[RMDB]
This 207-nucleotide RNA was probed chemically with 2A3 and DMS. 2A3 adducts were read by reverse transcription with SuperScript II with manganese.
RNA sequence: GGGAACGACUCGAGUAGAGUCGAAAAACUCGUGUGUGAACGUGAGUGAUCUCACGUGUGAGAGAGAACUCGAGAGAGUGUACACGUACUCACUCACUCUCUCGAACGUACUCACGAGUGAUCGUACUCGAGUGAGUACGUGUUCGUGUACUCACUCCCCUCAAAGACUAUUCGUAGUCUUUGAGGGAAAAGAAACAACAACAACAAC
Reactivity to 2A3 in 0.01 (KOAc 150mM, MgCl2 10mM, bicine 150mM(pH8.5), 24C), signal-to-noise 7, nucleotides 027 to 156: a000c010u010c000g010u010g000u010g010u020g090a090a010c010g000u010g010a020g000u210g240a210u150c000u000c010a010c020g040u040g010u120g010a070g000a000g000a000g020a070a020c040u030c120g000a010g000a000g000a010g010u040g040u120a050c140a020c160g080u150a050c030u040c070a030c030u030c000a000c000u000c000u000c000u010c000g000a020a000c010g040u060a020c000u000c010a000c020g000a000g000u010g010a020u080c070g060u110a070c060u030c090g000a010g010u000g000a000g000u000a000c010g030u060g040u070u070c080g000u050g010u070a020c000u010c020a010c000u020c000
Reactivity to DMS in 0.01 (KOAc 150mM, MgCl2 10mM, bicine 150mM(pH8.5), 24C), signal-to-noise 4, nucleotides 027 to 156: a050c000u000c000g050u020g030u000g010u010g030a150a030c010g020u010g010a040g030u010g000a150u000c010u000c010a000c000g000u000g010u000g020a270g010a130g020a120g020a110a090c050u000c030g010a110g010a120g010a040g010u000g020u000a090c090a130c140g010u010a070c070u000c020a130c040u010c010a110c020u000c000u020c010u000c020g010a060a020c040g000u000a050c020u000c020a050c000g010a040g030u000g010a140u000c100g000u010a030c030u000c040g000a100g010u000g010a040g010u000a010c030g030u000g010u000u000c140g010u010g010u010a100c040u000c000a040c040u000c010